[RMDB]
RNA sequence: GGGAACGACUCGAGUAGAGUCGAAAAGAAAUGAAAAGAGACUAGGACUUAGGGAGGCUGCCUCACUUUCCCAAGAUUACAGACUUAGGGACUGGCUGCAAAGCUGGGGUUACUGUGUCAGAUUGUCCCUUCUGAAGCCCGACUUCUUGAACUAGGAGUUGGGUAAUAAAUUCGUUUAUUACCCAACAAAAGAAACAACAACAACAAC
Reactivity to 2A3 in 0.01 (KOAc 150mM, MgCl2 10mM, bicine 150mM(pH8.5), 24C), signal-to-noise 2, nucleotides 027 to 156: g020a030a030a020u190g010a020a060a070a080g080a020g020a050c020u030a030g030g000a030c020u090u100a050g030g020g000a020g030g020c060u070g010c030c000u040c030a060c010u050u060u000c010c010c000a000a000g040a040u130u130a040c090a120g110a040c060u080u170a090g000g020g010a000c030u010g060g000c020u050g030c030a110a030a030g050c020u050g010g030g000g020u010u010a050c000u050g040u020g030u130c000a000g030a060u050u050g040u030c010c000c000u030u050c010u050g050a080a060g000c010c010c020g040a040c030u030u070c000u040u120g090a090a050c020u220a050g030g050a080
Reactivity to DMS in 0.01 (KOAc 150mM, MgCl2 10mM, bicine 150mM(pH8.5), 24C), signal-to-noise 2, nucleotides 027 to 156: g030a140a040a090u010g000a130a060a090a180g020a130g000a100c030u010a130g020g010a080c030u000u000a080g030g000g020a060g000g000c060u000g010c040c030u000c000a090c030u000u020u010c020c010c010a050a120g000a170u010u010a150c060a150g000a080c030u000u010a110g010g050g010a070c020u000g000g000c010u000g030c100a040a040a090g000c050u000g040g000g040g010u000u000a060c050u010g030u000g000u000c050a080g010a140u010u000g000u000c020c000c000u000u000c060u010g010a090a100g000c010c020c010g040a090c030u000u000c010u010u010g010a070a120c080u000a090g000g020a160